Chemical mapping of a 207-nucleotide RNA with 2A3.
Reactivities are given for positions 27 through 156.
2A3 adducts were read by reverse transcription with SuperScript II with manganese.
The RNA was probed in 150 mM KOAc, 10 mM MgCl2 and 150 mM bicine (pH 8.5) at 24 C.
RNA sequence: GGGAACGACUCGAGUAGAGUCGAAAAGUAUCAGUUCGCUGAUACAAAAAAGAUAUGGAUACAGGUCAGAGGCGUAACGUUUGACGUCGGAAACGACCGAGUUACGCUACCCACCUGAUCUGUAUCCUAAGUCAAAAAAUGCUGCUUCGGCAGCAAAUCAGGUGUUCUGAUUCGUCAGAACACCUGAAAAAGAAACAACAACAACAAC
Reactivity to 2A3 in 0.01 (KOAc 150mM, MgCl2 10mM, bicine 150mM(pH8.5), 24C), signal-to-noise 1, nucleotides 027 to 156: g000u000a000u000c000a010g050u090u100c140g090c170u020g000a000u020a000c010a000a220a020a000a000a000g030a010u040a010u050g000g000a000u000a000c000a000g000g010u000c000a010g010a030g070g000c000g000u000a010a000c000g020u030u190u300g150a110c110g000u010c020g000g010a010a020a010c000g000a000c010c020g020a010g000u000u000a000c000g020c000u000a010c030c010c000a100c000c000u010g000a010u030c000u000g000u010a000u000c000c000u000a000a000g000u000c020a020a020a050a040a060a110u110g010c000u060g000c000u040u050c140g110g000c000a000g000c000a000a010a110